RNA sequence: GGGAACGACUCGAGUAGAGUCGAAAAAAAUCAAUUGAUUCCUUAAUCUCUGAAGUGAAUCAAGUCAGCAUUACUACUGCUGUAACCCUACCCAUUAAGAUUAUGGAUUUUGGUAAGUCGGUCACUGUCAAUGAUCAGCAUUCGUGCUGAUCAUUGAAAAAGAAACAACAACAACAAC
Reactivity to 2A3 in 0.01 (KOAc 150mM, MgCl2 10mM, bicine 150mM(pH8.5), 24C), signal-to-noise 1, nucleotides 027 to 126: a000a000a000u110c010a030a110u000u010g000a030u000u020c000c000u000u000a160a150u160c160u000c060u300g180a030a000g020u080g170a000a000u010c000a010a020g090u080c000a000g000c020a050u020u100a140c050u040a040c030u000g040c000u000g000u060a060a090c000c000c000u050a070c000c000c040a030u040u030a100a010g120a210u060u090a020u130g110g000a070u000u110u130u150g030g010u030a070a020g030u060c010g100g000u070c020a030c030u000g060
Reactivity to DMS in 0.01 (KOAc 150mM, MgCl2 10mM, bicine 150mM(pH8.5), 24C), signal-to-noise 3, nucleotides 027 to 126: a090a050a070u010c120a110a090u000u010g000a040u000u000c000c010u010u010a110a090u010c150u010c150u030g020a050a030g000u010g010a040a020u010c020a010a030g000u010c030a020g000c010a030u000u010a120c170u010a150c300u000g000c010u000g000u000a130a120c030c010c010u010a050c100c010c000a030u000u010a060a160g010a070u000u010a030u000g000g010a250u000u010u010u020g010g010u000a060a050g010u010c080g010g000u000c060a070c080u000g000
An RNA of 177 nucleotides, treated with 2A3 and DMS and read out base by base. Reactivities are given for positions 27 through 126. 2A3 adducts were read by reverse transcription with SuperScript II with manganese. For DMS, 1,709 sequencing reads were counted.